Annotation
Conditions: 150 mM KOAc, 10 mM MgCl2 and 150 mM bicine (pH 8.5), 24 C. The record gives the reactivity of an RNA of 207 nucleotides to DMS and 2A3. For 2A3 the reverse transcriptase was SuperScript II with manganese. For 2A3, 7,323 sequencing reads were counted. Source: RMDB library RNAMAK, as collected in RNAgym. In probing experiments dimethyl sulfate is read out at A N1 and C N3, which are open when not base-paired.
[RMDB]
RNA sequence: GGGAACGACUCGAGUAGAGUCGAAAACCGUAGGCAAUUAUCAGUGGCAGGAGUAACCCGUUGAACCCGACUUCGAAAGAGGUCGCUCAGCGUGUGCCUACCUCCUGCGUAACAUCUGAUAUUUGCCUAAACGGAAAGUCAUCGUUCGCGAUGACAAUCCUUUACGAGAGUUCGCUCUCGUAAAGGAAAAAGAAACAACAACAACAAC
Reactivity to DMS in 0.01 (KOAc 150mM, MgCl2 10mM, bicine 150mM(pH8.5), 24C), signal-to-noise 1, nucleotides 027 to 156: c020c050g030u010a030g000g000c020a010a000u000u010a000u000c030a010g050u000g020g000c020a020g040g030a080g000u000a080a040c090c020c000g050u000u010g000a030a060c130c100c020g010a030c010u020u020c010g010a130a250a300g000a050g020g030u000c000g030c050u000c010a050g020c020g020u010g020u000g000c030c040u010a300c200c020u000c000c000u010g000c000g000u000a040a060c040a090u040c000u010g000a040u000a000u000u000u000g020c010c000u000a010a020a040c030g010g020a070a090a120g010u000c010a010u030c000g000u000u000c290g010c050g000a010u000g020a010c000a120a030
Reactivity to 2A3 in 0.01 (KOAc 150mM, MgCl2 10mM, bicine 150mM(pH8.5), 24C), signal-to-noise 5, nucleotides 027 to 156: c010c000g010u010a020g000g040c000a010a020u010u000a000u030c000a010g000u030g040g010c000a000g010g020a010g020u030a050a050c000c000c010g000u000u010g020a020a020c080c070c020g000a000c010u000u020c000g080a120a050a060g010a000g020g000u010c000g000c020u000c010a010g000c020g030u160g050u140g110c020c020u050a070c020c020u000c000c000u010g000c000g010u030a020a020c030a140u140c000u000g010a000u000a000u010u010u000g000c000c000u000a010a020a000c000g050g030a180a060a020g000u000c000a000u000c010g070u110u100c260g000c020g110a000u000g000a000c000a000a030